[RMDB]
RNA sequence: GGGAACGACUCGAGUAGAGUCGAAAAUAGCGGCAACGAUAUGGACCGAGCUCGGAACUACCAGGGGAGGAUCGGAAACGAUCUGAAAGACUGGCCGAGCGUUUGACGUCCUAAGUCUCAUUUGUAACGUAUUAGUGAACUUCGGUUCACUAAUACGAAAAGAAACAACAACAACAAC
Reactivity to DMS in 0.01 (KOAc 150mM, MgCl2 10mM, bicine 150mM(pH8.5), 24C), signal-to-noise 6, nucleotides 027 to 126: u010a110g010c060g010g010c150a070a090c090g010a070u000a120u010g010g000a020c000c020g010a100g010c010u000c010g020g010a080a020c060u010a300c040c000a020g010g000g010g010a300g000g010a010u000c000g000g000a060a100a180c010g020a010u000c000u000g010a110a120a140g010a100c010u000g030g020c000c000g000a010g000c010g010u000u010u010g000a090c300g000u000c010c000u000a050a110g000u000c020u010c050a140u010u010u010g010u010a110a170
Reactivity to 2A3 in 0.01 (KOAc 150mM, MgCl2 10mM, bicine 150mM(pH8.5), 24C), signal-to-noise 4, nucleotides 027 to 126: u100a030g090c060g050g000c050a080a040c100g070a050u050a050u180g020g010a000c020c050g030a060g000c000u010c010g010g020a090a070c090u200a090c220c000a000g020g020g040g020a110g020g030a000u000c000g010g000a040a040a020c010g000a000u000c000u010g030a030a070a010g230a050c010u010g000g000c000c000g000a000g040c010g000u030u080u140g030a030c030g020u000c020c000u010a090a010g010u000c010u000c060a200u120u170u210g200u110a180a020